Background:
This 207-nucleotide RNA was probed chemically with DMS and 2A3.
[RMDB]
RNA sequence: GGGAACGACUCGAGUAGAGUCGAAAAGGACUAUCAGACAUGCAAAGCGCAGUGAAUCAGGCGAUAAGCCUUAUUUGAGUCCAAAUGAUUUACUGAAUGAACAACAGCAAGGGCCUAAAAUGGCCUGAGUGCUUGUGCCAGAGGCACCAUCAGCACAGCUCUAAUAAACCUUCGGGUUUAUUAGAGCAAAAGAAACAACAACAACAAC
Reactivity to DMS in 0.01 (KOAc 150mM, MgCl2 10mM, bicine 150mM(pH8.5), 24C), signal-to-noise 2, nucleotides 027 to 156: g050g010a150c040u010a120u000c060a040g030a070c070a040u020g020c090a100a070a160g010c130g070c030a030g040u000g000a030a020u000c020a080g010g050c050g010a180u000a090a220g000c010c020u000u000a060u000u000u010g030a130g020u000c000c040a090a080a110u000g010a070u000u000u000a040c020u010g030a120a100u000g000a100a100c040a070a080c050a020g000c030a100a300g000g000g020c000c010u010a010a060a080a100u010g010g020c020c000u000g000a140g020u000g000c040u010u010g030u000g000c000c020a210g000a100g020g030c010a040c030c040a110u010c050a060g040c020a030c000a170
Reactivity to 2A3 in 0.01 (KOAc 150mM, MgCl2 10mM, bicine 150mM(pH8.5), 24C), signal-to-noise 4, nucleotides 027 to 156: g030g000a020c020u040a090u110c050a050g070a120c010a110u050g040c060a110a150a120g080c070g000c020a000g020u010g030a000a000u020c020a020g010g000c000g040a060u120a190a050g030c000c000u030u030a030u010u040u070g040a010g000u010c010c000a040a020a030u150g010a030u060u050u140a050c030u010g060a050a080u110g050a100a030c040a040a040c000a050g040c040a030a100g030g000g000c000c020u170a190a220a070a060u170g000g000c000c000u010g000a000g010u020g000c010u040u070g000u000g010c020c010a110g060a220g130g010c000a010c040c010a050u110c040a010g030c020a010c020a030
Values are in units of 0.01, from 0 to 300, in steps of 10. The DMS profile rests on 3,887 reads. For DMS the reverse transcriptase was MarathonRT. 2A3 adducts were read by reverse transcription with SuperScript II with manganese.